Structure probing data (DMS and 2A3) for a 177-nucleotide construct.
Conditions: 150 mM KOAc, 10 mM MgCl2 and 150 mM bicine (pH 8.5), 24 C.
For DMS, 3,838 sequencing reads were counted.
It was measured as part of the RMDB library OK2TST.
DMS adducts were read by reverse transcription with MarathonRT.
High 2A3 reactivity points to a flexible backbone, as in loops and unpaired stretches.
For 2A3 the reverse transcriptase was SuperScript II with manganese.
RNA sequence: GGGAACGACUCGAGUAGAGUCGAAAAGGCACUCAUGGACACCCAUAGAACACCACGAGUACACCGAAGAUCUGUUUCACAGAUGUGAACUGUAUUCGGUGGUGAAGUGUCCUUCUAUGGGAGUGCAGCAGAGCGCAACAUUCGUGUUGUGCUCUGCAAAAGAAACAACAACAACAAC
Reactivity to DMS in 0.01 (KOAc 150mM, MgCl2 10mM, bicine 150mM(pH8.5), 24C), signal-to-noise 4, nucleotides 027 to 126: g020g010c030a000c010u000c040a100u010g010g010a110c200a060c040c020c010a060u000a020g000a060a100c040a040c090c000a030c000g000a030g000u000a050c000a000c090c000g000a260a070g000a010u000c000u000g020u000u010u010c200a050c000a030g000a010u000g010u010g000a170a060c170u000g000u000a020u000u000c000g010g020u020g010g000u000g010a070a060g000u000g000u000c060c150u000u000c030u000a020u000g020g010g000a020g000u000g000c010a140
Reactivity to 2A3 in 0.01 (KOAc 150mM, MgCl2 10mM, bicine 150mM(pH8.5), 24C), signal-to-noise 1, nucleotides 027 to 126: g070g000c010a010c020u020c040a070u150g020g030a010c020a000c040c020c000a030u020a020g050a040a010c000a000c020c020a000c010g000a020g040u050a030c000a000c000c000g010a010a000g060a060u050c000u020g020u040u170u080c090a030c000a010g170a140u150g110u000g130a000a010c000u000g010u000a020u010u000c000g000g020u000g000g000u020g030a060a030g020u020g020u030c000c020u030u020c030u010a000u030g000g000g000a010g000u000g000c000a000